[RMDB]
RNA sequence: GGGAACGACUCGAGUAGAGUCGAAAAGCACCUCGACGCCGCUGCGGCCGGCUUCUUCCUGCCGAUCGUUCACACCGUCGGUGACCAUCACCCGGCAGAAUGGGCACGCGGUGGCGAUUGCGGUGGCACCCGUCAUUCGGUUCGCCGAAUGACGGGUAAAAGAAACAACAACAACAAC
Reactivity to 2A3 in 0.01 (KOAc 150mM, MgCl2 10mM, bicine 150mM(pH8.5), 24C), signal-to-noise 2, nucleotides 027 to 126: g060c010a000c010c000u010c000g000a000c000g000c000c010g010c000u010g000c000g030g000c020c100g210g050c000u100u130c020u060u020c070c000u000g010c000c000g020a080u100c120g060u150u080c100a030c030a020c100c030g230u170c060g010g000u000g020a030c060c060a100u230c030a020c010c050c000g000g000c020a020g040a040a060u130g030g020g010c130a130c240g020c000g020g000u000g000g010c000g000a000u000u010g000c010g000g000u000g020g000c000
Structure probing data (2A3) for a 177-nucleotide construct. The 2A3 profile rests on 1,205 reads. High 2A3 reactivity points to a flexible backbone, as in loops and unpaired stretches. The RNA was probed in 150 mM KOAc, 10 mM MgCl2 and 150 mM bicine (pH 8.5) at 24 C.